[RMDB]
RNA sequence: GGGAACGACUCGAGUAGAGUCGAAAAGAACUGGUCGAUACAAGUGGCUGACUGUCCUGAAUUGUGCUGGACCAGUAGUUGCUAUGGCUUUAUUGACGAAUCUGAAAAUAGGGUCUUCCUGGGCCAAGAGCUAUGCGAGUUUCGACUCGCAUAGCUCAAAAGAAACAACAACAACAAC
Reactivity to 2A3 in 0.01 (KOAc 150mM, MgCl2 10mM, bicine 150mM(pH8.5), 24C), signal-to-noise 2, nucleotides 027 to 126: g100a010a050c070u000g000g000u000c000g000a000u020a070c050a000a040g100u000g050g000c010u120g190a100c010u040g050u260c000c000u050g030a190a140u080u090g060u070g130c020u100g030g020a050c080c070a000g000u000a030g040u040u000g000c000u030a020u120g010g020c000u090u030u140a080u150u070g040a010c050g050a000a110u070c040u300g110a030a030a030a030u050a000g000g000g000u000c000u040u060c040c040u000g000g000g080c000c000a100a000